[RMDB]
RNA sequence: GGGAACGACUCGAGUAGAGUCGAAAACGCCGGACCGGCCGAUCCGGUUGCGUCUGGGCGUCGGCCGGGUCACCCUGCUGGCGACGCUGGCCGUGGUGGCGCUGCAACUGCUCUACGUCCAGAGCAAACCUGGAGCAUGAUUCGUCAUGCUCCAGGUAAAAGAAACAACAACAACAAC
Reactivity to DMS in 0.01 (KOAc 150mM, MgCl2 10mM, bicine 150mM(pH8.5), 24C), signal-to-noise 2, nucleotides 027 to 126: c070g010c020c000g010g000a050c020c020g000g010c020c010g000a150u010c020c000g000g020u010u000g030c050g010u000c000u000g020g020g020c020g000u000c040g010g040c020c010g010g010g000u000c000a020c030c000c030u000g010c020u020g010g020c030g010a130c270g000c000u000g000g020c000c040g010u010g020g000u000g000g010c000g020c070u000g010c070a280a160c180u000g000c030u000c020u000a050c020g010u000c010c000a030g000a070g020c010a110a060
Reactivity to 2A3 in 0.01 (KOAc 150mM, MgCl2 10mM, bicine 150mM(pH8.5), 24C), signal-to-noise 1, nucleotides 027 to 126: c020g010c000c010g000g010a020c000c000g000g000c010c000g030a060u010c000c000g000g010u000u130g050c010g170u020c000u010g010g000g000c000g000u010c010g000g010c000c000g000g000g000u020c000a000c000c000c010u020g020c000u010g000g010c010g070a080c240g000c010u010g020g000c000c060g060u190g000g000u010g010g020c050g000c020u000g020c030a300a300c220u300g030c020u040c000u030a000c030g020u010c000c010a000g010a000g010c000a030a050